[RMDB]
RNA sequence: GGGAACGACUCGAGUAGAGUCGAAAAGUACGCCUGAUGCAAAAGUUUCUGCACUGUAUCUCGCACCUGUGAAUCGGUGCUGGCAAUCACGGUCGCUGUCAGCUGUCUCUGGGCAAGCUCCUUAGCAGCCUUUUCAUAUUUUCGAAUAUGAAAAGGCAAAAGAAACAACAACAACAAC
Reactivity to 2A3 in 0.01 (KOAc 150mM, MgCl2 10mM, bicine 150mM(pH8.5), 24C), signal-to-noise 3, nucleotides 027 to 126: g030u020a020c050g020c000c020u030g020a040u050g010c040a050a030a040a230g010u030u090u050c040u050g000c020a020c060u020g030u120a050u020c090u020c030g000c010a070c030c080u110g030u040g150a060a060u100c050g020g000u020g000c010u010g020g030c010a020a050u090c020a020c100g040g010u050c050g020c050u020g010u070c020a020g010c000u040g030u050c010u000c030u120g030g010g000c010a030a010g030c010u040c020c000u060u050a020g050c040a020
Reactivity to DMS in 0.01 (KOAc 150mM, MgCl2 10mM, bicine 150mM(pH8.5), 24C), signal-to-noise 6, nucleotides 027 to 126: g020u000a080c180g020c030c030u000g010a100u010g020c050a060a080a130a130g010u000u000u000c030u000g010c050a060c040u000g020u000a080u000c060u000c130g010c040a060c080c090u000g010u000g010a080a100u010c100g000g010u000g020c020u010g010g010c070a060a060u000c060a040c100g010g020u010c060g010c040u000g010u000c050a060g000c040u000g000u010c040u000c070u000g000g010g010c070a060a100g010c070u000c040c020u000u010a080g010c140a160
An RNA of 177 nucleotides, treated with 2A3 and DMS and read out base by base. For DMS, 7,372 sequencing reads were counted. For DMS the reverse transcriptase was MarathonRT. Conditions: 150 mM KOAc, 10 mM MgCl2 and 150 mM bicine (pH 8.5), 24 C. For 2A3 the reverse transcriptase was SuperScript II with manganese.